[RMDB]
RNA sequence: GGGAACGACUCGAGUAGAGUCGAAAACAAGUUACCGCAUUUUCGAUUGGAAUUAGGCUAGCAAAUUCAGUAUAUUUGGCUUCUGCUUCUUCCAACGUAUCCGCUACAAUUGGGCUAAUUCCUGGGAGACGAUAAUUUACUUCGGUAAAUUAUCGUCAAAAGAAACAACAACAACAAC
Reactivity to 2A3 in 0.01 (KOAc 150mM, MgCl2 10mM, bicine 150mM(pH8.5), 24C), signal-to-noise 4, nucleotides 027 to 126: c030a030a040g030u060u120a060c040c010g100c100a090u040u050u070u130c050g130a200u030u070g020g000a010a030u040u020a070g080g030c070u060a010g030c050a010a020a080u100u090c070a080g170u090a150u030a040u260u050u060g130g020c020u040u020c040u110g010c010u030u000c010u070u000c010c000a010a000c010g020u030a070u020c040c060g000c070u040a040c040a060a300u070u060g020g000g000c010u040a050a010u020u000c000c010u030g030g060g010a080
Reactivity to DMS in 0.01 (KOAc 150mM, MgCl2 10mM, bicine 150mM(pH8.5), 24C), signal-to-noise 4, nucleotides 027 to 126: c100a080a120g000u000u000a100c120c090g000c120a100u000u000u000u000c020g000a160u010u000g000g000a050a030u010u000a040g010g000c040u000a030g010c050a040a010a030u000u010c120a130g020u010a070u020a070u020u000u000g010g020c030u000u000c090u010g000c030u000u000c150u000u000c010c000a030a040c100g010u000a040u000c130c090g000c080u000a070c110a080a110u010u000g020g010g000c050u000a040a170u000u000c010c000u010g000g000g020a230
The record gives the reactivity of an RNA of 177 nucleotides to 2A3 and DMS.
2A3 adducts were read by reverse transcription with SuperScript II with manganese.
The 2A3 profile rests on 4,363 reads.
The reactions ran in a buffer of 150 mM KOAc, 10 mM MgCl2 and 150 mM bicine (pH 8.5), at 24 C.